[RMDB]
The record gives the reactivity of an RNA of 207 nucleotides to 2A3 and DMS. Source: RMDB library M2RFPK, as collected in RNAgym. The RNA was probed in 150 mM KOAc, 10 mM MgCl2 and 150 mM bicine (pH 8.5) at 24 C. For 2A3 the reverse transcriptase was SuperScript II with manganese.

RNA sequence: GGGAACGACUCGAGUAGAGUCGAAAAGACAAUCCAGGGAACCGGAUGUCAUCACGUUGUUGCAGUACCAGAUGGCAUCUUAAAUCCGAUCUGCAAAUAAGCAAGUAGAAAGCUGAUGUGGGCUUUAAAAACGUGGUGCUGUUCGCAGCACCACGAACCAACUAAUUAUCUUCGGAUAAUUAGUUGGAAAAGAAACAACAACAACAAC
Reactivity to 2A3 in 0.01 (KOAc 150mM, MgCl2 10mM, bicine 150mM(pH8.5), 24C), signal-to-noise 2, nucleotides 027 to 156: g050a010c030a020a090u080c080c060a090g000g080g000a040a070c090c060g030g000a000u010g020u000c000a010u010c020a020c180g060u020u040g050u050u070g030c090a040g030u110a130c070c040a040g000a010u000g010g000c000a000u000c010u010u050a030a080a030u000c000c030g020a080u040c030u020g020c000a020a060a140u120a190a020g030c050a040a030g040u070a040g160a100a100a000g000c030u010g010a070u060g080u070g040g020g000c000u100u160u240a050a070a000a010a010c000g000u010g000g000u010g010c000u000g000u010u070c230g000c050a000g000c000a000c000c000a000c000g010a000a000
Reactivity to DMS in 0.01 (KOAc 150mM, MgCl2 10mM, bicine 150mM(pH8.5), 24C), signal-to-noise 2, nucleotides 027 to 156: g040a110c040a060a090u000c040c020a130g020g000g020a090a140c070c110g000g000a030u000g020u000c010a070u060c020a190c210g030u000u000g000u000u000g020c030a090g010u010a070c030c060a240g010a030u000g000g000c010a000u000c010u020u000a030a080a110u000c020c010g000a090u010c030u000g010c000a090a100a140u010a080a150g010c040a060a110g000u020a090g010a060a080a130g000c010u000g010a080u000g040u000g040g000g050c070u010u000u000a000a020a070a060a130c020g060u000g000g000u000g000c000u000g030u000u010c250g000c010a010g010c030a020c010c010a010c000g010a000a050